[RMDB]
RNA sequence: GGGAACGACUCGAGUAGAGUCGAAAAAUGGGGUCGUAGAGCUGUGGCACUACCCCAUGGGACACAAAUGCCCACGGGUCGUGCAUGUCGUCACGGUGACCGCGUGCCCACGUCGCCCCGCCGUGGCGGCGAGUCACGCCUUCGGGCGUGACUCGCCAAAAGAAACAACAACAACAAC
Reactivity to 2A3 in 0.01 (KOAc 150mM, MgCl2 10mM, bicine 150mM(pH8.5), 24C), signal-to-noise 1, nucleotides 027 to 126: a050u050g050g000g030g000u050c030g070u070a130g000a030g200c080u120g010u170g160g000c000a020c000u010a020c000c000c000c000a000u050g000g010g070a050c050a000c050a170a090a090u300g020c000c000c000a010c020g000g000g000u080c040g000u000g010c020a170u250g060u100c070g030u040c000a010c000g010g040u000g040a050c040c000g050c000g040u070g090c010c000c000a020c020g100u100c060g000c020c000c000c000g000c000c000g050u050g000g000c000